[RMDB]
RNA sequence: GGGAACGACUCGAGUAGAGUCGAAAAGUAACCCGGUAAAAUGUACUGAAAAUAGGGAUAAGAGUUGAACAGGUGCAAAGUGAAUAAGUAAAUUGUGAAAGUUCAGGGUUGACCAACAACCACACCACUACGAGUUUUAGUUCGCUAAAACUCGUAGAAAAGAAACAACAACAACAAC
Reactivity to DMS in 0.01 (KOAc 150mM, MgCl2 10mM, bicine 150mM(pH8.5), 24C), signal-to-noise 3, nucleotides 027 to 126: g010u000a100a140c020c010c010g020g020u010a050a070a110a090u070g000u010a060c080u000g010a100a060a050a100u010a080g020g000g020a120u020a040a050g000a080g020u010u000g000a100a070c150a060g010g000u000g000c000a020a050a020g000u010g000a040a010u000a020a040g000u000a030a020a190u030u030g040u020g000a040a160a210g000u000u000c020a020g000g010g000u000u000g000a080c070c090a140a120c010a000a000c040c020a040c030a020c020c020a300
Reactivity to 2A3 in 0.01 (KOAc 150mM, MgCl2 10mM, bicine 150mM(pH8.5), 24C), signal-to-noise 2, nucleotides 027 to 126: g040u070a140a120c010c000c020g060g000u110a190a190a150a050u160g020u010a030c090u080g140a130a080a060a000u140a050g000g030g000a010u030a170a030g030a040g080u050u170g070a120a060c080a020g030g000u000g000c000a130a120a130g140u160g020a040a000u040a030a000g040u030a000a000a190u300u250g060u010g130a060a000a000g000u010u020c010a000g010g020g000u000u000g000a010c000c000a020a060c000a000a000c000c010a050c040a000c000c010a030
Structure probing data (DMS and 2A3) for a 177-nucleotide construct. For 2A3 the reverse transcriptase was SuperScript II with manganese. The RNA was probed in 150 mM KOAc, 10 mM MgCl2 and 150 mM bicine (pH 8.5) at 24 C. Source: RMDB libraries RFM100 and RFMREP, as collected in RNAgym. DMS adducts were read by reverse transcription with MarathonRT.